[RMDB]
RNA sequence: GGGAACGACUCGAGUAGAGUCGAAAAGAUAUGGACCAUACGUAGUAUAUUCAGGCUAUGAAGUCGGAAACGAUGGAGCCUGAUAUAUCAAGUAUGGUCCUAAGUCAAAUCAGGGUUCGCCCUGAAAGACCACACUUGUGUUCGCACAAGUGUGGUCAAAAGAAACAACAACAACAAC
Reactivity to 2A3 in 0.01 (KOAc 150mM, MgCl2 10mM, bicine 150mM(pH8.5), 24C), signal-to-noise 1, nucleotides 027 to 126: g030a000u040a040u170g000g000a010c000c000a010u000a010c040g130u140a000g030u000a010u020a010u030u300c010a000g000g000c010u030a210u300g080a070a010g010u010c010g010g020a120a070a000c040g000a010u020g070g000a000g000c020c000u000g000a000u000a000u000a000u000c010a000a000g010u010a000u000g000g020u000c000c000u010a000a000g000u000c000a000a020a050u040c000a000g010g010g000u030u090c140g150c000c020c010u020g010a030a010a010
Reactivity to DMS in 0.01 (KOAc 150mM, MgCl2 10mM, bicine 150mM(pH8.5), 24C), signal-to-noise 1, nucleotides 027 to 126: g010a010u000a300u000g000g000a000c000c040a020u000a010c040g000u000a300g000u000a030u000a020u000u000c030a000g040g000c050u010a300u040g000a120a230g000u000c000g000g000a140a110a250c030g000a000u030g000g000a000g000c000c000u000g040a000u000a010u000a000u000c060a300a240g000u000a000u000g000g000u000c000c000u000a000a030g030u030c000a110a150a100u030c000a000g000g000g020u000u010c300g000c020c010c010u000g030a000a110a220
Structure probing data (2A3 and DMS) for a 177-nucleotide construct. The 2A3 profile rests on 1,512 reads. DMS adducts were read by reverse transcription with MarathonRT. It was measured as part of the RMDB library TTRDEL.